[RMDB]
RNA sequence: GGGAACGACUCGAGUAGAGUCGAAAAGGAAUGGCAUCUUAAAGGCGCUGAAAAAGUAUCGUCCGGUCAAGGCGGUUAACGGCGUUAUUGUGGCUAUUUCAGUCACCGACAUUUUGGGUAAAAGUAACCUAUCAAGAACGUUCGCGUUCUUGAUAGGAAAAGAAACAACAACAACAAC
Reactivity to 2A3 in 0.01 (KOAc 150mM, MgCl2 10mM, bicine 150mM(pH8.5), 24C), signal-to-noise 2, nucleotides 027 to 126: g010g030a030a010u020g000g000c030a060u050c130u100u110a040a060a080g020g040c000g000c020u020g120a150a020a020a010a000g040u040a010u020c000g070u040c020c020g080g040u170c050a020a080g000g000c010g000g000u050u010a090a010c020g020g030c010g010u000u030a100u100u070g070u040g060g000c000u010a050u020u040u040c030a000g030u050c040a030c150c020g070a040c010a100u190u150u100u110g080g000g120u200a100a090a030a000g060u040a020a060
Reactivity to DMS in 0.01 (KOAc 150mM, MgCl2 10mM, bicine 150mM(pH8.5), 24C), signal-to-noise 3, nucleotides 027 to 126: g000g000a050a040u000g000g000c020a100u000c060u020u010a090a140a180g000g010c020g000c030u010g030a060a080a110a110a100g020u000a040u000c020g010u010c010c040g000g020u010c250a110a190g010g000c020g000g000u000u010a100a150c030g000g000c010g010u000u000a080u010u000g020u010g010g000c000u000a060u000u000u000c040a060g010u000c070a070c020c060g000a050c110a110u000u000u000u010g000g020g010u000a020a050a070a100g010u000a080a140